An RNA of 207 nucleotides, treated with DMS and 2A3 and read out base by base. For DMS, 1,360 sequencing reads were counted.
[RMDB]
RNA sequence: GGGAACGACUCGAGUAGAGUCGAAAACCUUCAACUUCGGUUGAAGGAAAAAGCGUACUACCAGACAUGUUCACGAGUGCAAGUCCCAAAUAGGAUGAUGACCACUCUUUGGUGAACAACAGCUGGUAUCGCAAAAAGAUACGGUUCGCCGUAUCAAGCCAUUAUGCACUUUCGAGUGCAUAAUGGCAAAAGAAACAACAACAACAAC
Reactivity to DMS in 0.01 (KOAc 150mM, MgCl2 10mM, bicine 150mM(pH8.5), 24C), signal-to-noise 1, nucleotides 027 to 156: c000c000u000u010c020a000a000c010u020u010c290g060g060u010u000g020a000a000g270g030a000a010a050a050a220g000c000g010u000a010c170u000a000c010c000a060g050a110c050a300u000g000u000u000c050a010c020g000a020g020u000g000c000a040a300g030u000c000c010c020a070a070a110u020a000g000g000a010u000g000a170u020g020a240c300c000a040c000u000c000u010u010u010g040g060u000g040a010a000c000a000a090c100a220g000c010u010g000g000u000a040u040c020g090c030a080a000a130a140a130g000a000u000a000c000g010g000u000u020c300g190c010c010g000u030a010u000c000a010a100
Reactivity to 2A3 in 0.01 (KOAc 150mM, MgCl2 10mM, bicine 150mM(pH8.5), 24C), signal-to-noise 3, nucleotides 027 to 156: c000c000u000u000c000a000a000c000u040u040c260g130g000u020u020g010a000a020g020g150a130a030a050a000a000g020c020g040u110a080c030u000a000c030c000a020g140a230c030a120u070g010u000u000c000a000c010g000a010g000u000g020c030a150a170g010u050c000c020c040a100a290a050u300a110g040g000a050u100g030a050u100g010a020c100c010a000c000u000c000u120u160u280g190g010u010g000a000a000c000a000a030c020a040g060c000u020g030g000u000a010u110c000g000c000a140a000a000a000a000g000a020u020a010c000g000g080u020u070c210g040c100c010g070u030a000u130c000a000a030
Values are in units of 0.01, from 0 to 300, in steps of 10. For 2A3 the reverse transcriptase was SuperScript II with manganese.